[RMDB]
RNA sequence: GGGAACGACUCGAGUAGAGUCGAAAAUUAGAGGUUCGAAGGCGAUCAGAUACCGCCCUAGUUUUAACCAUAAAAGAUGCCAGCUAGCAAUUGGGUGUAGCUACUUUAAUCGAUCAUUCAUUCAGUCACUUUAUGCAUGCUUCGGCAUGCAUAAAGUAAAAGAAACAACAACAACAAC
Reactivity to DMS in 0.01 (KOAc 150mM, MgCl2 10mM, bicine 150mM(pH8.5), 24C), signal-to-noise 1, nucleotides 027 to 126: u010u000a090g010a200g030g000u000u000c100g000a100a120g040g020c060g010a020u010c150a180g000a120u000a050c020c050g000c030c010c000u000a060g010u000u000u000u010a080a170c030c060a030u000a120a040a120a090g030a100u010g000c120c110a080g000c010u000a000g000c030a080a090u000u000g000g000g050u010g000u000a080g000c090u000a050c060u000u000u000a090a040u010c060g000a030u000c000a050u010u010c040a140u000u000c080a140g020u000c130